[RMDB]
RNA sequence: GGGAACGACUCGAGUAGAGUCGAAAAGAGGUACCCAUGUUUGUAAACCCAGCUAAUGCAAAGCCCUUGCCUCUUUUCCAGGUUUCCGAUGAGGCGAUGAUUGGGGAAUUCGAUGGAAUUGGUAUUAUGGAAAAUACUGAUUCGUCAGUAUUUUCCAAAAAGAAACAACAACAACAAC
Reactivity to 2A3 in 0.01 (KOAc 150mM, MgCl2 10mM, bicine 150mM(pH8.5), 24C), signal-to-noise 2, nucleotides 027 to 126: g020a000g010g000u020a000c030c030c010a020u100g090u050u110u070g090u080a090a090a070c010c010c030a020g030c100u100a100a060u210g040c020a030a070a000g010c000c000c000u040u030g010c020c000u000c000u040u020u010u010c030c030a060g050g020u000u030u000c000c020g030a110u070g020a010g030g040c000g020a070u040g010a030u080u160g000g000g000g030a020a080u080u100c060g100a080u150g080g070a040a060u130u040g020g040u150a090u240u100a130
Reactivity to DMS in 0.01 (KOAc 150mM, MgCl2 10mM, bicine 150mM(pH8.5), 24C), signal-to-noise 6, nucleotides 027 to 126: g000a030g010g020u000a130c100c030c030a100u000g010u000u000u000g010u010a060a100a160c040c020c030a060g010c100u020a070a100u000g020c050a040a060a290g010c020c010c050u010u000g010c000c000u000c000u000u000u000u000c010c130a090g030g010u000u000u010c010c010g010a130u000g000a080g010g010c020g000a120u000g000a130u010u010g000g010g000g010a040a070u000u000c040g000a110u010g010g000a060a090u000u000g010g010u000a080u010u010a170